[RMDB]
The record gives the reactivity of an RNA of 177 nucleotides to DMS.
Values cover nucleotides 27 to 126.
For DMS, 2,007 sequencing reads were counted.
RNA sequence: GGGAACGACUCGAGUAGAGUCGAAAAUUAAAGAACUAUGAUCUGCACUGAACAAGUCACGGUGGUCGGAAACGACGCCGAAAGGCCAGGUCAUAGUUCCGACCUGAAGACUUGACGGGUGAAAAAAGACCUUAUCUUACUUCGGUAAGAUAAGGUCAAAAGAAACAACAACAACAAC
Reactivity to DMS in 0.01 (KOAc 150mM, MgCl2 10mM, bicine 150mM(pH8.5), 24C), signal-to-noise 2, nucleotides 027 to 126: u020u020a050a080a090g000a000a010c000u010a000u000g010a010u000c010u000g000c020a010c010u000g000a100a150c010a000a010g010u000c020a300c040g000g030u000g010g010u010c000g010g000a080a080a130c020g000a010c020g010c000c000g010a080a040a100g020g030c050c070a000g000g000u000c010a000u000a020g030u000u000c020c000g020a050c010c000u020g000a050a120g000a010c000u000u000g000a300c020g020g000g010u020g000a000a020a090a110a110a100

Conditions: 150 mM KOAc, 10 mM MgCl2 and 150 mM bicine (pH 8.5), 24 C.